[RMDB]
RNA sequence: GGGAACGACUCGAGUAGAGUCGAAAAGAUAUGGAGCCAUUAAGCUAGCUGAGUGAUCGGAAACGAUCACACAGCUUGGACCUUACGGUGGCUCCUAAGUCAAAAUCUCGAGCUUCGGCUCGAGAAAGAUACCUCGAUACUUCGGUAUCGAGGUAUCAAAAGAAACAACAACAACAAC
Reactivity to 2A3 in 0.01 (KOAc 150mM, MgCl2 10mM, bicine 150mM(pH8.5), 24C), signal-to-noise 2, nucleotides 027 to 126: g010a000u060a070u190g000g000a020g000c000c010a030u090u060a020a030g060c070u100a010g010c010u000g020a020g040u010g000a000u000c000g020g000a130a070a040c010g020a000u000c000a000c000a000c000a010g000c000u040u100g000g090a120c010c010u050u080a110c180g110g020u030g010g020c000u020c000c000u010a070a020g040u010c010a110a070a070a300u030c020u000c000g020a000g000c030u170u240c300g090g000c000u000c000g000a010g030a010a000a010
Reactivity to DMS in 0.01 (KOAc 150mM, MgCl2 10mM, bicine 150mM(pH8.5), 24C), signal-to-noise 2, nucleotides 027 to 126: g000a040u000a300u010g010g000a000g000c000c020a030u010u000a110a040g010c020u000a040g000c000u000g000a110g000u000g000a000u010c010g020g000a160a130a250c000g000a020u000c000a000c010a130c000a000g000c000u010u000g010g010a110c300c020u000u010a040c300g010g000u010g000g010c000u000c000c000u010a010a070g020u000c050a070a040a090a200u000c000u000c000g000a000g030c010u010u000c240g030g000c000u020c010g010a000g010a000a050a030